[RMDB]
RNA sequence: GGGAACGACUCGAGUAGAGUCGAAAAAGAUGGGCUUACCUACGGGAAUCCCUGGGUCCCCCUGAUGUCCAGUCCCUCCCCCGUCCGAGAGAAGGGAGACUCCGGAACUCCUGCCAUUUGAGGGACGUAGCAAGCAUGUUCGCAUGCUUGAAAAGAAACAACAACAACAAC
Reactivity to DMS in 0.01 (KOAc 150mM, MgCl2 10mM, bicine 150mM(pH8.5), 24C), signal-to-noise 9, nucleotides 027 to 129: a050g010a070u020g010g020g000c060u010u030a050c040c000u000a100c170g010g000g020a140a090u030c020c010c020u020g010g000g030u020c040c050c020c030c050u020g000a060u020g000u000c030c030a080g020u010c010c020c000u000c000c000c000c000c000g010u030c040c030g010a150g000a080g010a110a110g000g000g000a060g000a110c060u030c030c020g020g020a080a110c060u010c030c010u000g020c200c080a070u000u010u000g010a130g000g010g000a040c060g030u020a060g010
Reactivity to 2A3 in 0.01 (KOAc 150mM, MgCl2 10mM, bicine 150mM(pH8.5), 24C), signal-to-noise 9, nucleotides 027 to 129: a010g100a060u110g000g000g020c030u060u080a130c010c000u020a050c080g030g000g040a070a140u140c020c000c000u020g030g000g020u060c010c010c000c000c020u080g060a100u110g080u050c020c010a010g020u010c000c000c000u000c000c000c000c000c000g060u020c010c020g090a090g010a010g020a120a090g030g020g000a030g010a010c020u000c040c000g030g020a040a040c010u020c020c020u020g040c040c020a140u070u060u110g050a060g010g010g010a020c020g010u010a020g060